Source: RMDB library RFMREP, as collected in RNAgym.
Chemical mapping of a 177-nucleotide RNA with DMS.
DMS adducts were read by reverse transcription with MarathonRT.

RNA sequence: GGGAACGACUCGAGUAGAGUCGAAAAUAGUUGUAUGGGCAGAUAAAGCACUAGAGGGCGUAACGGCUGGGUGUAACCCAACUCUAGGUGUGCUGAUUAGCGGGCUUGACUCCGUAACAAAUAGGCAGAAUUACAGAACGUUCGCGUUCUGUAAUUCAAAAGAAACAACAACAACAAC
Reactivity to DMS in 0.01 (KOAc 150mM, MgCl2 10mM, bicine 150mM(pH8.5), 24C), signal-to-noise 2, nucleotides 027 to 126: u000a120g010u000u010g010u020a090u020g010g020g000c090a060g010a070u010a070a110a090g030c000a090c030u000a020g010a030g020g000g000c010g000u020a080a120c300g010g010c010u000g000g030g010u010g010u050a030a300c000c000c000a060a040c040u000c000u010a040g040g000u020g010u010g020c020u000g000a140u000u000a130g030c020g000g000g000c030u000u040g040a080c080u000c020c030g000u000a050a070c150a030a040a070u010a090g000g000c120a080